An RNA of 177 nucleotides, treated with DMS and read out base by base.
[RMDB]
RNA sequence: GGGAACGACUCGAGUAGAGUCGAAAAGAUAUGGAAAGGGGAAAUUCGGUAUAUGAUCGAUAAGCUAAUAUCGGAAACGAUAUGUAGCUUUUGACGAUCAUAUACCGAAUUUCCCCUUUCCUAAGUCGUUAAACCUGAAGUUCGCUUCAGGUUUAACAAAAGAAACAACAACAACAAC
Reactivity to DMS in 0.01 (KOAc 150mM, MgCl2 10mM, bicine 150mM(pH8.5), 24C), signal-to-noise 1, nucleotides 027 to 126: g010a110u010a300u000g000g000a010a020a000g000g020g010g000a000a000a000u000u000c000g030g030u000a000u000a000u000g000a020u010c010g020a180u000a010a010g000c000u010a060a030u000a000u000c010g000g000a160a100a300c000g010a050u010a020u000g010u000a010g010c000u000u000u010u020g020a180c170g010a010u000c010a000u000a000u000a000c010c010g000a000a000u000u000u000c000c000c010c010u000u000u000c000c000u010a000a110g010u010c090
It was measured as part of the RMDB library TTRINS. The DMS profile rests on 1,722 reads. DMS (dimethyl sulfate) methylates the pairing face of unpaired adenines and cytosines.